[RMDB]
RNA sequence: GGGAACGACUCGAGUAGAGUCGAAAACGGAUUCCUCCGGACACAGGGGACGAGCCCCUUUUUACUUUUGCUUUUCUCAGAUGCAUCCGGUGCUGCGGCAGAUGCGCCCCCCGCCCCAGCAGCAGCAGCAACAUCAGCAAGAGCGUCACCAGCAGCAAACUGAUAGGAUAUUCGUAUCCUAUCAGUUAAAAGAAACAACAACAACAAC
Reactivity to DMS in 0.01 (KOAc 150mM, MgCl2 10mM, bicine 150mM(pH8.5), 24C), signal-to-noise 1, nucleotides 027 to 156: c060g020g010a160u010u000c040c020u010c010c040g050g010a150c040a080c120a110g000g000g020g010a050c090g010a150g030c030c030c030c040u010u000u000u010u010a070c060u000u000u000u000g010c020u000u010u000u000c030u010c030a170g000a100u000g020c060a110u000c010c010g000g000u000g020c020u010g020c020g020g020c000a070g000a050u010g000c030g030c040c000c000c010c000c020g000c050c060c020c030a180g010c030a080g020c030a090g010c020a040g010c090a050a040c060a020u000c040a040g020c020a070a070g010a070g020c010g000u010c020a060c010c010a150g040c040a050g020c040a150
Reactivity to 2A3 in 0.01 (KOAc 150mM, MgCl2 10mM, bicine 150mM(pH8.5), 24C), signal-to-noise 1, nucleotides 027 to 156: c030g040g010a070u050u060c000c030u040c010c020g010g080a050c030a020c040a140g000g000g000g010a010c080g050a040g130c040c030c010c000u060u070u050u050u100a140c060u120u230u140u170g040c010u080u100u070u060c030u050c050a100g000a120u120g000c000a010u030c040c000g000g000u000g020c000u010g010c020g040g000c010a040g060a280u150g050c000g050c020c030c000c010c000c000g020c000c040c010c000a010g000c000a000g000c010a000g030c000a010g020c030a000a060c010a110u060c000a010g070c000a010a060g010a000g000c020g000u020c050a010c010c000a020g020c000a010g050c020a040
An RNA of 207 nucleotides, treated with DMS and 2A3 and read out base by base.
As a SHAPE reagent, 2A3 marks flexible, mostly unpaired nucleotides at the ribose 2'-OH.
For DMS, 3,030 sequencing reads were counted.